Source: RMDB library OK3TST, as collected in RNAgym. Chemical mapping of a 207-nucleotide RNA with 2A3 and DMS. The DMS profile rests on 7,900 reads. The reactions ran in a buffer of 150 mM KOAc, 10 mM MgCl2 and 150 mM bicine (pH 8.5), at 24 C.
RNA sequence: GGGAACGACUCGAGUAGAGUCGAAAAUUAGCGCGGUGUGGUGGCAUAUGCCUGUAAAUCCCAGCUAUUUGGGAGGCUGAGGCAGGAGAAUCGGUUGAACCCGUGUGGCAGAGGUUGCGGUGAGUGUAGAUUGCACCACUGCACUCUAGCCUGGGUAAUAAUAGGUGCUAUUCGUAGCACCUAUUAUAAAAGAAACAACAACAACAAC
Reactivity to 2A3 in 0.01 (KOAc 150mM, MgCl2 10mM, bicine 150mM(pH8.5), 24C), signal-to-noise 4, nucleotides 027 to 156: u120u040a030g020c030g010c030g020g000u030g020u040g010g010u010g040g000c020a030u100a050u150g030c010c000u040g050u110a060a060a030u030c000c010c010a010g010c080u150a140u200u190u070g020g010g000a010g030g000c070u060g020a030g070g000c020a000g030g030a050g050a040a080u100c080g040g000u000u020g040a030a020c020c010c010g050u150g030u070g090g000c000a000g000a000g050g120u240u140g000c020g020g000u000g000a280g010u010g000u020a110g040a300u140u300g000c000a000c000c000a000c000u010g000c010a010c010u010c000u010a050g000c000c010u010g010g020g000u010a010
Reactivity to DMS in 0.01 (KOAc 150mM, MgCl2 10mM, bicine 150mM(pH8.5), 24C), signal-to-noise 2, nucleotides 027 to 156: u000u010a070g030c040g020c050g010g020u000g010u000g030g030u000g020g050c040a120u000a060u000g020c030c000u000g010u000a060a100a170u000c010c010c010a090g020c100u010a090u000u000u000g000g020g020a040g020g020c100u000g000a090g020g010c030a040g010g000a070g020a020a090u000c040g000g010u040u010g000a070a090c020c000c000g030u010g040u010g000g030c010a050g010a060g010g010u000u000g030c000g000g000u010g010a140g030u010g010u000a110g010a220u000u010g010c010a040c010c020a070c000u000g020c010a020c000u000c010u000a100g030c000c010u010g010g020g010u000a080
For 2A3, 3,175 sequencing reads were counted.